Record summary:
This 177-nucleotide RNA was probed chemically with DMS and 2A3. Conditions: 150 mM KOAc, 10 mM MgCl2 and 150 mM bicine (pH 8.5), 24 C. For DMS, 974 sequencing reads were counted. Reactivities are rounded to 0.1 and cut off at 0 and 3.

RNA sequence: GGGAACGACUCGAGUAGAGUCGAAAAUCGCCAUCAUGUACCGGCGUUUACGUAAAGGGAUGAGCCCUUUCUCACCUGACCGCCAGCACAUCCAUCAUUUGAUCAUGCGUGCCGGUUUUACAUCACGGUUACGGGCUCAGUUCGCUGAGCCCGUAACAAAAGAAACAACAACAACAAC
Reactivity to DMS in 0.01 (KOAc 150mM, MgCl2 10mM, bicine 150mM(pH8.5), 24C), signal-to-noise 1, nucleotides 027 to 126: u010c070g030c030c000a110u000c220a080u000g020u000a040c100c040g050g040c030g000u000u000u000a040c100g000u000a050a090a080g000g000g030a120u010g000a070g030c030c050c010u000u000u000c090u000c070a120c060c080u010g000a050c080c040g030c010c040a050g000c000a090c050a050u000c110c100a070u000c040a140u000u020u010g020a060u000c100a050u000g040c040g040u000g020c070c000g040g010u000u010u000u020a000c130a080u000c090a060c170g020
Reactivity to 2A3 in 0.01 (KOAc 150mM, MgCl2 10mM, bicine 150mM(pH8.5), 24C), signal-to-noise 1, nucleotides 027 to 126: u050c020g060c040c000a030u040c040a060u120g060u060a020c010c020g000g010c000g090u090u140u110a050c040g040u070a050a150a030g120g000g010a070u140g020a060g110c020c010c060u000u090u010c060u040c010a060c020c020u000g050a010c000c030g020c030c010a000g000c000a030c000a050u030c040c000a060u100c030a080u080u080u220g080a080u100c050a020u110g000c000g050u010g000c000c000g000g000u020u000u030u050a000c010a020u030c060a000c030g100